[RMDB]
RNA sequence: GGGAACGACUCGAGUAGAGUCGAAAACUGUCUGUCUGUCACUGUCAGUCUGUGAGACACACUGUCUCACAGUGUCUCUCACUCAGAGUGUGUCUGUCAGUGUCAGUCACACUCAGUGUCAGUCACAGUGCUUUCAUCCAUUCGUGGAUGAAAGCACAAAAGAAACAACAACAACAAC
Reactivity to 2A3 in 0.01 (KOAc 150mM, MgCl2 10mM, bicine 150mM(pH8.5), 24C), signal-to-noise 2, nucleotides 027 to 126: c020u020g100u130c030u050g040u000c000u020g030u010c010a000c020u020g050u160c020a030g050u080c040u110g010u000g010a000g000a000c030a020c040a010c070u080g040u050c040u040c250a040c000a000g000u000g010u000c010u020c000u000c020a010c030u080c080a010g020a010g080u020g010u020g010u000c010u000g080u100c050a180g110u040g110u300c010a000g000u040c000a000c000a010c010u020c000a000g000u000g000u050c010a000g010u060c060a000c030a130
Reactivity to DMS in 0.01 (KOAc 150mM, MgCl2 10mM, bicine 150mM(pH8.5), 24C), signal-to-noise 3, nucleotides 027 to 126: c030u000g010u000c100u000g010u000c010u000g020u000c030a030c010u010g000u000c150a120g000u010c040u010g010u060g000a000g010a000c100a080c070a040c100u000g020u000c150u010c230a110c010a010g000u000g010u000c200u000c020u000c010a020c050u000c150a120g000a040g020u000g040u010g020u010c000u000g050u000c070a200g010u000g010u000c000a010g010u000c020a000c020a020c030u000c000a030g030u000g030u020c030a050g010u000c080a040c100a080

The record gives the reactivity of an RNA of 177 nucleotides to 2A3 and DMS. 2A3 is a SHAPE reagent: it acylates the 2'-hydroxyl of flexible nucleotides of all four kinds. The reactions ran in a buffer of 150 mM KOAc, 10 mM MgCl2 and 150 mM bicine (pH 8.5), at 24 C.